[RMDB]
RNA sequence: GGGAACGACUCGAGUAGAGUCGAAAACCUCACUACAUUUUACUGUUCCUAAAGAAUUUGUGACAGGUACAGUAAAACGUAUUGCAAGGUUUAUCAGUUCCUAUAUACAGGUAAAUAACAAUAUAUGAAAAGCAAAGACUGUUCGCAGUCUUUGCAAGAAUCUUGACGUGUUCGCACGUCAAGAUUCAAAAGAAACAACAACAACAAC
Reactivity to 2A3 in 0.01 (KOAc 150mM, MgCl2 10mM, bicine 150mM(pH8.5), 24C), signal-to-noise 2, nucleotides 027 to 156: c000c000u000c000a020c000u000a000c000a020u000u020u000u000a000c000u000g030u020u080c010c010u080a080a110a050g110a250a140u160u220u240g130u110g090a080c080a040g000g000u010a000c000a000g000u000a000a000a000a000c010g000u020a020u000u030g000c050a070a070g040g010u010u000u010a200u200c000a010g000u010u010c000c000u020a010u010a010u010a030c060a060g110g000u080a100a090a040u170a140a050c050a180a050u140a010u050a010u240g020a180a150a000a000g010c010a000a000a000g000a000c000u010g040u060u010c170g040c060a000g010u020c000u000u020u000g000c000a010a000

Chemical mapping of a 207-nucleotide RNA with 2A3.
Source: RMDB library M2RFOK, as collected in RNAgym.